[RMDB]
RNA sequence: GGGAACGACUCGAGUAGAGUCGAAAAGAAGAGAAAUCUUGUCAGGUCUACACGCAAGUGUUGAAUGAAAAUUUAAUCGUAUUUGUAAAUACGACACCUUGUGUGGAAGCUGUCCUUUAUGGACAGCCGCUUCGAACUCAUUCGUGAGUUCGAAGCGAAAAGAAACAACAACAACAAC
Reactivity to 2A3 in 0.01 (KOAc 150mM, MgCl2 10mM, bicine 150mM(pH8.5), 24C), signal-to-noise 5, nucleotides 027 to 126: g050a020a010g070a000g040a010a130a090u060c050u050u060g060u060c080a020g060g130u010c030u050a010c000a000c010g010c010a010a020g020u030g040u300u050g040a020a040u070g050a010a030a040a060u060u070u080a050a040u010c010g000u010a010u010u030u190g210u120a020a020a000u000a000c010g000a000c000a000c010c000u000u000g000u000g000u010g010g020a010a010g000c000u000g000u000c020c000u080u210u110a130u240g000g010a000c000a000g010c000
Reactivity to DMS in 0.01 (KOAc 150mM, MgCl2 10mM, bicine 150mM(pH8.5), 24C), signal-to-noise 2, nucleotides 027 to 126: g010a020a000g010a040g000a090a090a070u000c000u000u000g040u000c090a100g010g020u000c020u000a120c000a000c020g000c020a010a020g000u040g000u020u020g010a020a020u000g000a070a060a110a050u010u000u000a030a090u000c000g000u000a000u000u000u040g010u010a040a000a010u010a000c010g010a030c010a020c000c010u010u000g020u010g010u000g000g000a080a130g000c010u010g000u000c000c000u000u030u050a070u010g000g000a000c000a000g010c000

Source information: Source: RMDB libraries RFM100 and RFMREP, as collected in RNAgym. This 177-nucleotide RNA was probed chemically with 2A3 and DMS. As a SHAPE reagent, 2A3 marks flexible, mostly unpaired nucleotides at the ribose 2'-OH. Values cover nucleotides 27 to 126. The RNA was probed in 150 mM KOAc, 10 mM MgCl2 and 150 mM bicine (pH 8.5) at 24 C.